[RMDB]
RNA sequence: GGGAACGACUCGAGUAGAGUCGAAAAUACCGUCUUCUCCCCGACGGUUUCAAUCCAUAGCUUCACGUUGUGUAGCGUAGGUGGAAGGUAUCGUGUGGUGUAUAAACACCACAUACUCUCUUAGGGGUCAAGCUGAUAAACUUCGGUUUAUCAGCAACGCAUUACUAACGUUCGCGUUAGUAAUGCGAAAAGAAACAACAACAACAAC
Reactivity to DMS in 0.01 (KOAc 150mM, MgCl2 10mM, bicine 150mM(pH8.5), 24C), signal-to-noise 1, nucleotides 027 to 156: u000a060c000c000g040u000c000u000u000c040u010c000c000c010c060g000a040c040g000g000u000u000u000c030a090a120u000c010c030a110u000a140g020c020u000u000c040a030c020g010u000u010g030u000g010u010a020g020c010g030u000a060g040g000u000g000g000a030a040g040g010u000a040u010c070g020u000g000u010g040g070u020g000u000a180u000a170a140a160c000a010c010c000a000c000a000u010a020c040u010c000u000c020u000u000a190g010g000g000g040u000c060a030a240g020c000u020g010a030u000a010a000a010c010u000u000c290g030g000u000u000u000a000u000c000a010g020c000a000a000
Reactivity to 2A3 in 0.01 (KOAc 150mM, MgCl2 10mM, bicine 150mM(pH8.5), 24C), signal-to-noise 5, nucleotides 027 to 156: u070a000c000c010g020u010c020u170u040c030u100c000c000c000c000g000a010c010g010g000u010u050u040c050a030a040u000c010c000a020u040a100g010c010u050u040c010a030c070g300u300u280g020u100g010u050a010g010c040g070u110a070g060g050u030g010g030a070a030g060g020u100a080u230c120g020u020g000u000g010g020u010g050u020a080u130a270a210a010c000a000c010c010a000c000a000u030a000c000u030c000u010c020u070u200a040g000g010g020g000u050c080a080a010g000c000u000g000a000u000a000a010a000c000u020u050c170g080g000u010u010u000a000u000c010a000g010c000a000a010

The record gives the reactivity of an RNA of 207 nucleotides to DMS and 2A3. The DMS profile rests on 3,654 reads. Reactivities are given for positions 27 through 156.